[RMDB]
RNA sequence: GGGAACGACUCGAGUAGAGUCGAAAAUGAUCAGGCCCAUGCGCAGGGCACCGGCGACGCGGAUCCGUUCGAAGCGCGCCAGUUGCUGCGGGUCGCCGUUGAUCUCUUCGCGCAGCUCGGUGCCGCAUGGCAUACCGAUGUUCGCAUCGGUAUGCCAAAAAGAAACAACAACAACAAC
Reactivity to 2A3 in 0.01 (KOAc 150mM, MgCl2 10mM, bicine 150mM(pH8.5), 24C), signal-to-noise 1, nucleotides 027 to 126: u170g070a080u100c010a040g110g010c000c000c000a040u040g000c020g000c000a010g010g000g010c000a000c010c000g000g040c000g000a020c030g000c030g200g060a100u070c010c090g050u060u070c030g120a130a040g030c010g010c010g020c030c000a020g100u100u230g130c080u080g040c000g080g000g020u040c010g000c010c040g030u020u050g030a080u010c020u000c060u060u150c080g000c000g020c040a030g020c030u140c200g000g000u150g010c000c000g000c010a010
Reactivity to DMS in 0.01 (KOAc 150mM, MgCl2 10mM, bicine 150mM(pH8.5), 24C), signal-to-noise 2, nucleotides 027 to 126: u010g000a110u020c110a120g010g020c050c010c020a100u000g010c060g000c090a110g010g020g000c030a020c050c030g000g000c000g000a020c030g000c030g020g000a040u020c160c120g000u000u010c090g020a110a090g010c040g030c060g030c060c080a050g020u010u010g020c030u000g010c030g020g020g020u000c010g020c110c030g010u000u020g000a090u000c000u000c120u000u000c080g020c020g010c100a040g010c060u010c070g030g030u000g030c030c020g000c090a090

Chemical mapping of a 177-nucleotide RNA with 2A3 and DMS. For DMS the reverse transcriptase was MarathonRT. It was measured as part of the RMDB library OK2TRN.